[RMDB]
RNA sequence: GGGAACGACUCGAGUAGAGUCGAAAACCAUUGAGAAACAUCCUAGCAUUUAAGGCCUCUUAAUGUAAGAUAAGCCGGGUACUAUCUCUUUUACUUCUCUCUCUACUAUCUUCUUUGUGUUCUGUUUUUACAAUAGCAAAUUCGUUUGCUAUUGUAAAAAAGAAACAACAACAACAAC
Reactivity to 2A3 in 0.01 (KOAc 150mM, MgCl2 10mM, bicine 150mM(pH8.5), 24C), signal-to-noise 9, nucleotides 027 to 126: c010c000a030u050u210g090a090g030a030a120a010c030a040u070c010c010u050a050g040c070a130u080u110u150a100a030g040g000c010c010u070c000u080u060a120a080u200g090u130a070a060g030a090u050a070a030g020c020c000g010g000g010u030a050c040u030a040u030c010u000c000u030u050u030u060a080c040u080u030c020u000c000u000c000u010c010u020a060c010u030a100u090c030u140u020c010u030u120u060g060u020g020u030u010c020u030g290u040u010u000
Reactivity to DMS in 0.01 (KOAc 150mM, MgCl2 10mM, bicine 150mM(pH8.5), 24C), signal-to-noise 3, nucleotides 027 to 126: c020c010a120u020u010g020a120g010a100a090a090c090a110u000c020c030u010a080g000c050a060u010u010u000a080a040g020g020c120c100u000c010u000u010a050a060u020g000u010a060a090g010a080u010a060a110g020c010c040g000g030g030u000a060c090u010a080u010c020u010c010u000u000u000u000a060c050u010u000c020u010c010u000c010u000c030u000a050c060u000a080u000c050u000u000c070u040u000u000g020u030g020u000u010c010u000g000u000u000u000